[RMDB]
RNA sequence: GGGAACGACUCGAGUAGAGUCGAAAAGAUAUGGAGGAAUCGUCAGCACCAAUGAUGUCAUCUCGGAAACGAGAUGAUUGAGGUGCGACGAGUUCCUCCUAAGUCAAAACUCACCUUCGGGUGAGAACAAACUUGAUUACUUCGGUAAUCAAGUUUGAAAAGAAACAACAACAACAAC
Reactivity to 2A3 in 0.01 (KOAc 150mM, MgCl2 10mM, bicine 150mM(pH8.5), 24C), signal-to-noise 4, nucleotides 027 to 126: g010a030u090a050u160g010g000a000g010g030a000a000u010c010g010u010c070a120g000c000a010c010c020a060a300u140g050a010u090g040u030c000a000u000c000u000c010g020g020a060a070a050c010g000a000g000a010u000g010a000u000u020g000a010g000g000u000g000c000g000a000c010g010a000g000u010u000c000c000u000c000c000u000a010a000g000u000c000a000a010a030a100c000u000c000a000c010c010u050u130c300g200g000g000u010g020a010g010a020a010
Reactivity to DMS in 0.01 (KOAc 150mM, MgCl2 10mM, bicine 150mM(pH8.5), 24C), signal-to-noise 6, nucleotides 027 to 126: g020a040u000a300u000g000g010a020g010g010a000a050u000c000g010u000c010a130g040c000a010c000c000a230a300u010g010a100u000g000u000c000a000u000c000u000c000g010g000a100a080a190c000g010a010g010a010u000g010a000u000u010g010a080g030g020u000g000c000g000a000c010g010a030g020u010u000c010c000u000c000c000u000a000a070g010u010c050a120a060a120a200c010u000c000a010c000c000u000u010c220g030g010g010u010g010a010g010a090a160